[RMDB]
Structure probing data (2A3 and DMS) for a 207-nucleotide construct. For 2A3, 2,456 sequencing reads were counted. For 2A3 the reverse transcriptase was SuperScript II with manganese. The reactions ran in a buffer of 150 mM KOAc, 10 mM MgCl2 and 150 mM bicine (pH 8.5), at 24 C. For DMS, 1,570 sequencing reads were counted. It was measured as part of the RMDB library OK3TST.

RNA sequence: GGGAACGACUCGAGUAGAGUCGAAAAGUAUCGCCAUUACAUGGGUGCACGGGAACAUCCGGUUUAGGCGAUUUAAAUUUAUCACUCAUAAGCCAAUGAUCAUAGUUGCACUCAUAUAACCUGUAUAAAUCCGACAGAGCGCGGGAAUCAUCGGCAAGGCUUAACCUUAUUUCGAUAAGGUUAAGCCAAAAGAAACAACAACAACAAC
Reactivity to 2A3 in 0.01 (KOAc 150mM, MgCl2 10mM, bicine 150mM(pH8.5), 24C), signal-to-noise 4, nucleotides 027 to 156: g140u090a080u080c040g010c040c020a060u060u160a070c050a110u050g010g000g010u010g000c010a000c080g020g030g060a070a030c030a050u040c040c080g000g080u040u040u040a020g020g000c000g010a010u000u020u080a020a060a000u080u150u080a090u070c030a020c040u140c060a110u030a080a000g000c000c000a030a020u020g050a030u070c040a080u100a270g080u150u050g000c000a010c030u010c000a000u030a010u020a070a030c010c020u030g030u060a090u030a140a100a080u100c020c040g020a040c040a090g150a020g040c170g000c020g010g000g020a040a040u060c020a040u080c020g060g000c050a120a010
Reactivity to DMS in 0.01 (KOAc 150mM, MgCl2 10mM, bicine 150mM(pH8.5), 24C), signal-to-noise 1, nucleotides 027 to 156: g050u000a080u030c060g020c020c000a300u010u000a030c000a090u020g030g020g000u000g040c030a090c000g040g030g030a120a060c000a010u010c000c030g060g040u000u000u000a190g000g000c000g020a010u010u000u000a040a120a210u000u000u000a040u010c050a050c010u000c060a190u020a060a080g010c030c020a070a060u000g000a110u000c060a120u000a090g040u000u000g000c020a000c000u000c010a060u000a070u000a060a120c010c040u040g050u000a090u000a100a140a120u010c090c010g000a170c050a060g000a090g000c100g040c030g020g000g040a040a050u000c040a090u000c030g020g030c100a110a150